[RMDB]
RNA sequence: GGGAACGACUCGAGUAGAGUCGAAAAUAUACUUUAGAUGUCGGCACAACUCCCGACUCGCGGUGAGCGAUACAGCGUAGCGCGAGCAUCGCAGCUGCUGUGCGGACGGCUAGCAAAAGUUAGCCAAAUUAUCCAGUCCUUUCGAGGACUGGAUAAUAAAAGAAACAACAACAACAAC
Reactivity to DMS in 0.01 (KOAc 150mM, MgCl2 10mM, bicine 150mM(pH8.5), 24C), signal-to-noise 3, nucleotides 027 to 126: u030a090u060a060c060u000u030u010a030g000a100u030g030u000c000g000g030c040a050c020a020a130c090u030c100c170c010g010a140c070u010c050g050c030g020g000u010g010a080g050c010g010a160u030a100c090a150g000c030g010u020a060g020c020g020c000g020a060g000c060a030u010c060g030c090a190g000c170u000g030c060u000g010u000g000c000g000g000a020c030g020g010c000u000a010g000c030a070a090a040a110g010u000u000a010g000c000c000a060a060
Reactivity to 2A3 in 0.01 (KOAc 150mM, MgCl2 10mM, bicine 150mM(pH8.5), 24C), signal-to-noise 5, nucleotides 027 to 126: u190a020u070a050c050u140u190u110a080g060a180u190g010u010c030g120g030c020a010c020a060a090c060u030c000c010c010g050a080c020u000c020g000c010g000g090u070g030a060g000c010g120a120u080a240c080a070g020c030g130u300a020g140c000g000c000g030a040g050c020a110u070c000g000c040a050g010c020u090g010c020u030g000u020g020c030g030g030a020c040g000g000c000u000a000g000c010a040a200a190a100g000u010u010a000g000c000c000a000a080